An RNA of 177 nucleotides, treated with 2A3 and read out base by base. The 2A3 profile rests on 464 reads.
RNA sequence: GGGAACGACUCGAGUAGAGUCGAAAAAUAGGAUGAUUUGUACUUGCUUACAUUUUUACAAUAAAAUGAUCUACAUGGAAGGACCGUGUUUGGUUGCUUUCAGCUCUGUAUAAUGUGGAAUGUGAAGCGUAUCGAGCCAGUUCGCUGGCUCGAUACGAAAAGAAACAACAACAACAAC
Reactivity to 2A3 in 0.01 (KOAc 150mM, MgCl2 10mM, bicine 150mM(pH8.5), 24C), signal-to-noise 2, nucleotides 027 to 126: a010u150a070g150g030a130u090g010a020u000u020u140g130u180a110c090u030u040g070c000u110u000a000c000a180u060u000u000u000u060a000c000a010a000u090a150a090a110a130u170g060a080u050c000u090a030c060a220u000g000g000a010a010g020g020a000c010c000g030u030g250u120u060u290g010g000u000u000g270c010u000u070u000c000a000g000c000u000c060u000g130u030a030u000a200a200u000g000u000g050g040a060a140u000g000u010g150a040a000g000